An RNA of 177 nucleotides, treated with DMS and 2A3 and read out base by base. 2A3 adducts were read by reverse transcription with SuperScript II with manganese. For 2A3, 9,714 sequencing reads were counted. It was measured as part of the RMDB library TTRDEL. DMS adducts were read by reverse transcription with MarathonRT. The reactions ran in a buffer of 150 mM KOAc, 10 mM MgCl2 and 150 mM bicine (pH 8.5), at 24 C.
[RMDB]
RNA sequence: GGGAACGACUCGAGUAGAGUCGAAAAGAUAUGGAUCAGACUGGAGCCUGGUGUCGGAAACGACACGCCAGGCGAUGAAAGUCUGAGUCCUAAGUCAAACGGAAUUAGUGUUCGCACUAAUUCCGAAGACACUAGUAGGGUUCGCCCUACUAGUGUCAAAAGAAACAACAACAACAAC
Reactivity to DMS in 0.01 (KOAc 150mM, MgCl2 10mM, bicine 150mM(pH8.5), 24C), signal-to-noise 5, nucleotides 027 to 126: g010a030u000a010u020g000g010a060u000c000a000g010a020c000u010g000g000a020g040c000c000u000g000g000u000g020u000c000g020g000a000a000a010c010g010a010c000a000c040g010c300c030a000g000g010c010g010a050u020g000a210a190a030g000u000c000u010g000a020g000u000c000c000u000a010a080g000u000c000a080a120a280c020g000g000a020a010u000u000a000g020u000g010u000u010c250g030c010a020c000u000a000a020u000u000c000c000g010a020a040
Reactivity to 2A3 in 0.01 (KOAc 150mM, MgCl2 10mM, bicine 150mM(pH8.5), 24C), signal-to-noise 2, nucleotides 027 to 126: g000a000u000a000u040g000g000a000u000c000a010g010a010c010u000g020g040a010g000c020c010u010g020g030u000g000u000c000g000g010a010a000a000c000g010a000c000a010c000g090c250c040a000g000g000c000g010a030u020g000a000a010a000g000u000c000u000g010a010g010u090c000c000u010a010a000g000u010c000a010a040a050c020g010g000a000a010u010u010a010g010u010g070u120u090c300g070c120a000c000u000a000a010u000u000c000c000g000a050a050